[RMDB]
An RNA of 177 nucleotides, treated with DMS and 2A3 and read out base by base.

RNA sequence: GGGAACGACUCGAGUAGAGUCGAAAAGGCAACCGCUGCUCAUGACAGGCGGCAUAGCUCUUCCUGACGGUCGGCACAUUUGCGCGCAAUGGGCGAUUGACUGUGCCGCUUUCGGGCACGGGAAGAAUCGUCCCACUCAGUUCGCUGAGUGGGACGAAAAAGAAACAACAACAACAAC
Reactivity to DMS in 0.01 (KOAc 150mM, MgCl2 10mM, bicine 150mM(pH8.5), 24C), signal-to-noise 2, nucleotides 027 to 126: g030g020c270a100a090c120c010g000c180u000g010c040u000c020a200u010g030a080c210a070g000g010c010g000g030c040a000u010a070g000c130u000c010u000u000c000c000u000g000a130c150g010g000u000c040g050g000c000a030c070a110u000u020u010g020c040g060c070g020c060a110a080u010g020g000g030c100g000a040u010u000g000a150c020u000g030u000g000c000c000g000c060u000u000u000c060g020g000g000c030a040c000g000g020g000a200a070g000a120a140
Reactivity to 2A3 in 0.01 (KOAc 150mM, MgCl2 10mM, bicine 150mM(pH8.5), 24C), signal-to-noise 1, nucleotides 027 to 126: g100g010c050a050a030c020c030g020c110u000g000c000u040c030a110u090g120a050c010a110g000g000c000g000g010c060a000u020a000g030c020u020c030u110u030c000c000u050g020a070c060g060g280u130c020g090g050c000a050c050a250u080u080u110g020c110g010c000g000c000a080a100u090g030g030g000c020g050a060u020u090g020a030c010u000g000u000g010c000c020g000c020u080u020u090c050g030g020g000c000a000c000g010g000g070a070a080g080a020a040

Values cover nucleotides 27 to 126.